Structure probing data (DMS and 2A3) for a 207-nucleotide construct. The data come from the RNA Mapping Database (RMDB), library OK3TST.

RNA sequence: GGGAACGACUCGAGUAGAGUCGAAAAAGACGCGGCGCGCAAGUCACGCUGUGCCACCUGCAUCGCCAGUUUCCCGGUAGGGAUGCCGAGGUAUUCAAUCGUGUUGCUGUUCAGACAGCCCUGAUUCUGGAUCUGCGCGAGGUUGUGGCUACGCACCAUACCCCCAUGAAUUCGUUCAUGGGGGUAUAAAAGAAACAACAACAACAAC
Reactivity to DMS in 0.01 (KOAc 150mM, MgCl2 10mM, bicine 150mM(pH8.5), 24C), signal-to-noise 1, nucleotides 027 to 156: a070g000a020c060g050c020g050g080c010g080c050g050c040a120a160g040u000c050a040c000g000c000u000g000u010g030c010c010a050c020c010u000g020c060a090u000c030g020c000c020a080g020u000u000u000c010c010c020g010g000u000a120g020g020g010a050u010g000c000c040g000a100g050g020u000a120u010u000c090a080a130u000c110g020u000g050u010u010g020c000u000g010u020u000c040a140g010a060c040a050g000c030c020c010u000g010a080u000u000c020u030g020g000a060u000c060u010g000c110g020c010g010a050g000g010u000u000g030u000g000g020c010u000a070c040g030c040a050c040c050
Reactivity to 2A3 in 0.01 (KOAc 150mM, MgCl2 10mM, bicine 150mM(pH8.5), 24C), signal-to-noise 2, nucleotides 027 to 156: a000g080a000c050g040c070g040g060c000g000c010g020c120a110a020g090u100c020a030c070g030c010u040g020u040g060c010c000a040c000c020u060g010c020a050u020c030g030c010c010a040g020u010u130u100c000c010c010g000g030u040a040g030g060g030a080u110g000c000c000g030a030g080g030u160a110u090u190c090a050a100u040c050g040u070g050u290u140g000c010u040g010u090u120c020a020g060a170c000a000g030c000c000c000u070g020a080u250u000c020u030g010g010a040u010c010u020g110c060g030c020g140a000g010g000u090u080g000u000g000g000c010u000a020c080g020c040a020c000c020
Values cover nucleotides 27 to 156.
For DMS, 3,543 sequencing reads were counted.
The reactions ran in a buffer of 150 mM KOAc, 10 mM MgCl2 and 150 mM bicine (pH 8.5), at 24 C.
For 2A3, 1,010 sequencing reads were counted.